[RMDB]
RNA sequence: GGGAACGACUCGAGUAGAGUCGAAAAGAUAUGGAUACAGGCAACAGCUAUAGGUCGGAAACGACCUGAUAGACAUGCCUGAAUCCUAAGUCAAAGAUGUCAGGCUAGUUCGCUAGCCUGACAUCAACUUUAAGAAUAUCUUCGGAUAUUCUUAAAGAAAAGAAACAACAACAACAAC
Reactivity to DMS in 0.01 (KOAc 150mM, MgCl2 10mM, bicine 150mM(pH8.5), 24C), signal-to-noise 3, nucleotides 027 to 126: g010a030u000a150u010g000g000a010u000a100c010a010g000g020c010a030a130c300a130g010c000u000a010u000a020g000g010u000c000g000g000a030a040a130c000g020a010c000c000u010g010a020u000a000g000a130c130a120u000g000c010c000u010g000a060a020u000c000c010u000a040a110g000u000c020a120a090a150g010a010u010g000u010c010a000g000g010c000u000a020g000u010u000c220g010c010u000a010g000c000c010u010g000a000c010a000u000c000a030a040
Reactivity to 2A3 in 0.01 (KOAc 150mM, MgCl2 10mM, bicine 150mM(pH8.5), 24C), signal-to-noise 2, nucleotides 027 to 126: g010a010u030a000u050g020g010a000u050a090c010a000g000g000c020a070a060c080a300g000c030u000a020u020a030g000g020u010c000g000g010a000a010a040c000g000a010c000c000u010g000a000u000a010g100a110c050a120u010g000c000c030u010g000a000a000u020c010c000u010a030a010g030u010c040a000a050a240g010a000u000g010u020c000a010g070g010c010u000a010g060u070u120c270g020c220u020a000g000c000c030u000g000a000c000a000u000c000a000a000